Structure probing data (2A3) for a 177-nucleotide construct.
Reactivities are rounded to 0.1 and cut off at 0 and 3.
Source: RMDB library RFM100, as collected in RNAgym.
The 2A3 profile rests on 402 reads.
RNA sequence: GGGAACGACUCGAGUAGAGUCGAAAAUGAAAGUGGAAUUCACUCAGUGUUCAAUGAAUGUGGUCUCCAAAACGCUUUUUAAAAAGAGUCCAAUUCAUCAUCACAUUGAUAGGAACAUGAUUAAUUUUCAGUUGGAAACUUUCGAGUUUCCAACUGAAAAAGAAACAACAACAACAAC
Reactivity to 2A3 in 0.01 (KOAc 150mM, MgCl2 10mM, bicine 150mM(pH8.5), 24C), signal-to-noise 1, nucleotides 027 to 126: u150g020a000a000a070g060u060g000g110a300a150u090u060c020a020c010u000c020a060g000u000g010u020u050c020a010a010u050g000a000a000u240g070u010g300g050u010c000u040c000c050a110a030a000a030c150g140c050u140u110u090u150u180a070a180a070a000a000g060a000g000u000c000c000a000a000u050u000c000a000u020c000a060u100c020a000c000a050u000u130g020a040u160a200g040g000a000a080c010a020u020g010a090u150u070a110a040u000u020u030

The reactions ran in a buffer of 150 mM KOAc, 10 mM MgCl2 and 150 mM bicine (pH 8.5), at 24 C.